[RMDB]
RNA sequence: GGGAACGACUCGAGUAGAGUCGAAAACGAAGGACUUUCGAGUCCUUCGACUUACGGAGAAAGAUCCUCGGUAUAAAUCUGGAACCCUUGGAAACAAGGGAAUGAACGGAAUCUUCGGAUUCCGUAACUUUAAGAACCCUUUCGAGGGUUCUUAAAGAAAAGAAACAACAACAACAAC
Reactivity to 2A3 in 0.01 (KOAc 150mM, MgCl2 10mM, bicine 150mM(pH8.5), 24C), signal-to-noise 2, nucleotides 027 to 126: c010g000a000a000g000g010a010c010u060u080u110c220g050a040g020u000c000c000u000u000c010g010a010c000u010u040a010c030g130g000a030g040a060a210a000g090a100u040c020c020u040c010g000g030u060a160u060a150a160a090u070c030u090g080g070a090a140c000c000c000u000u000g010g010a020a040a030c000a000a010g000g000g070a000a020u050g010a000a010c000g020g010a000a000u010c000u060u080c160g070g000a000u000u010c000c000g000u010a010a050
Reactivity to DMS in 0.01 (KOAc 150mM, MgCl2 10mM, bicine 150mM(pH8.5), 24C), signal-to-noise 3, nucleotides 027 to 126: c040g000a010a000g000g010a010c000u010u000u010c140g030a030g010u010c000c000u000u000c000g010a070c130u000u000a030c050g000g000a070g000a120a130a110g010a110u000c030c000u000c060g010g020u010a050u010a040a060a080u000c100u000g020g000a130a090c010c000c010u000u000g000g000a180a080a180c010a010a010g010g010g000a030a030u010g000a140a040c000g000g000a020a000u000c000u000u000c180g000g000a010u000u000c000c000g010u000a000a060